[RMDB]
RNA sequence: GGGAACGACUCGAGUAGAGUCGAAAAGGCCACUUCUUCGGAAGUGGCCAAAGGGAAACCAAGCAGUACGUUCGUAUACGUACAGGAAAAAUAAAUACGAAAAAAGACUCAGCUUCGGCUGAGUCAACAGUAGAUUGAACUUCGGUUCAAUCUACUGAAAAGAAACAACAACAACAAC
Reactivity to 2A3 in 0.01 (KOAc 150mM, MgCl2 10mM, bicine 150mM(pH8.5), 24C), signal-to-noise 1, nucleotides 027 to 126: g000g010c020c000a000c000u010u000c000u030u050c150g090g010a010a020g000u000g010g000c010c010a000a000a000g000g000g010a000a000a060c010c010a020a010g170c060a040g030u000a010c000g000u010u040c010g000u030a050u000a070c010g010u010a000c050a070g140g050a070a140a030a000a000u130a050a030a000u030a020c010g000a070a000a000a000a000a160g000a000c000u000c000a000g000c000u020u180c230g090g000c010u000g010a000g000u000c000a000a000
Reactivity to DMS in 0.01 (KOAc 150mM, MgCl2 10mM, bicine 150mM(pH8.5), 24C), signal-to-noise 2, nucleotides 027 to 126: g020g000c000c000a010c030u000u000c000u000u030c160g020g000a050a010g030u000g020g000c010c000a000a000a040g040g020g000a170a050a300c010c010a070a130g020c170a150g010u000a000c000g000u010u010c020g060u000a010u000a080c000g010u010a010c000a220g030g020a000a050a010a040a050u000a040a020a020u020a000c010g020a020a080a090a150a110a210g000a030c000u000c000a010g020c000u000u010c190g000g000c000u010g010a000g030u000c000a010a050